[RMDB]
RNA sequence: GGGAACGACUCGAGUAGAGUCGAAAAGAUAUGGACGAUCUCCGAUAAGCUAGGGUCGGAAACGACCUUUAGCUUUUGACGGAGCAGAGUCCUAAGUCAAACAGAUACAUGUUCGCAUGUAUCUGAAGUAUCAGUACUUGUUCGCAAGUACUGAUACAAAAGAAACAACAACAACAAC
Reactivity to 2A3 in 0.01 (KOAc 150mM, MgCl2 10mM, bicine 150mM(pH8.5), 24C), signal-to-noise 3, nucleotides 027 to 126: g000a000u070a020u100g010g000a000c010g040a050u040c000u020c010c000g060a120u060a300a020g000c000u010a000g000g030g020u010c000g030g000a030a020a030c010g020a000c000c000u010u030u040a010g000c000u000u000u010u040g030a020c010g000g000a000g010c090a030g060a040g020u000c000c000u000a090a010g030u000c020a090a050a090c000a010g010a000u010a010c000a010u020g070u080u110c300g000c170a000u000g000u000a010u000c000u000g000a050a020
Reactivity to DMS in 0.01 (KOAc 150mM, MgCl2 10mM, bicine 150mM(pH8.5), 24C), signal-to-noise 7, nucleotides 027 to 126: g000a030u000a230u010g010g000a030c010g010a300u000c000u000c000c000g020a120u000a020a020g020c010u000a010g010g000g010u000c000g010g000a030a040a130c010g010a010c000c000u000u010u010a000g010c010u000u000u000u010g010a240c070g000g000a010g010c170a030g000a300g000u000c000c000u000a030a100g000u000c020a120a110a240c010a010g000a010u000a000c000a000u000g000u000u010c210g010c010a000u010g000u000a000u000c000u000g000a040a090